RNA sequence: GGGAACGACUCGAGUAGAGUCGAAAAUUUUUCUUAAAGGCUGCUCUUGUACUGCUCACACACAUCGCAUCGCGUCGUAUUUAAGAAUACGCAUAGAACGUCCUAUAACCAUUUAUGGCAUAGGUCAGACCUCGGAUUACUUCGGUAAUCCGAGGUCAAAAGAAACAACAACAACAAC
Reactivity to 2A3 in 0.01 (KOAc 150mM, MgCl2 10mM, bicine 150mM(pH8.5), 24C), signal-to-noise 1, nucleotides 027 to 126: u240u250u000u000u000c020u050u240a210a100a000g110g000c000u000g000c020u000c020u000u160g010u000a020c000u000g020c120u090c010a080c000a000c000a000c000a120u050c030g040c020a040u080c140g020c120g050u070c030g000u000a230u010u000u300a200a120g060a000a000u050a000c000g000c020a000u060a000g000a050a000c060g020u000c000c000u060a150u050a290a180c020c000a000u000u070u220a140u300g000g050c000a060u000a000g040g000u000c000a000